[RMDB]
RNA sequence: GGGAACGACUCGAGUAGAGUCGAAAAUAUACCAGCAAUGAACACCCAAAACGGGUUGGUGGCCUCAACAGGAAAUUUUUCAUUCGAGUUUGCUAUGAGUCGAGUUUGCUGCUGAAACCUCGUUUACGUGCGAGGUCCAAUUCGUUGGACCUCGCACAAAAGAAACAACAACAACAAC
Reactivity to 2A3 in 0.01 (KOAc 150mM, MgCl2 10mM, bicine 150mM(pH8.5), 24C), signal-to-noise 2, nucleotides 027 to 126: u210a010u020a050c020c000a020g000c030a060a170u200g070a080a050c000a030c000c000c000a170a300a000a000c050g000g040g000u000u020g040g010u040g030g000c000c000u050c000a010a020c040a070g020g180a040a040a040u150u070u000u020u020c100a170u080u170c100g020a050g070u110u180u000g100c100u030a140u290g000a000g030u010c000g000a020g000u030u060u070g040c000u000g060c030u020g000a140a070a030c000c010u050c040g070u000u230u000a060c200